An RNA of 177 nucleotides, treated with 2A3 and DMS and read out base by base. For 2A3 the reverse transcriptase was SuperScript II with manganese. The RNA was probed in 150 mM KOAc, 10 mM MgCl2 and 150 mM bicine (pH 8.5) at 24 C. Source: RMDB library OK2TRN, as collected in RNAgym. For DMS, 13,247 sequencing reads were counted. For DMS the reverse transcriptase was MarathonRT. The 2A3 profile rests on 22,019 reads.

RNA sequence: GGGAACGACUCGAGUAGAGUCGAAAAUUAGUCAUCCAUCGUAUCCGAACGCUGAUUGGACAGGAGAAAUACACUGACUACCUAACAGUCAUGGACAGGUAUUCUGUGGAUGCUGACCUGCAACUGGGUUACAGCUAAAGUUCGCUUUAGCUGUAACAAAAGAAACAACAACAACAAC
Reactivity to 2A3 in 0.01 (KOAc 150mM, MgCl2 10mM, bicine 150mM(pH8.5), 24C), signal-to-noise 9, nucleotides 027 to 126: u070u030a010g050u120c010a010u000c010c000a010u040c040g020u030a030u030c010c010g040a060a030c040g000c140u020g020a080u020u040g020g050a080c060a050g030g030a030g080a040a100a020u270a050c150a020c100u110g090a060c010u190a300c010c000u020a050a030c010a030g030u050c020a070u110g030g080a030c050a080g020g020u090a060u060u040c030u050g020u010g010g000a000u020g000c010u020g030a060c000c010u010g020c050a100a060c090u080g090g080
Reactivity to DMS in 0.01 (KOAc 150mM, MgCl2 10mM, bicine 150mM(pH8.5), 24C), signal-to-noise 9, nucleotides 027 to 126: u010u010a040g020u010c020a040u000c010c020a020u010c260g010u000a050u000c020c020g010a080a170c140g010c120u000g000a070u000u000g000g000a130c160a050g010g000a080g000a080a090a070u010a130c140a090c200u000g000a130c050u000a070c020c020u010a090a200c050a030g010u000c100a030u000g010g010a110c120a080g010g000u000a040u010u000c050u000g020u000g000g010a030u000g020c030u000g000a140c020c000u000g000c080a040a090c120u010g010g010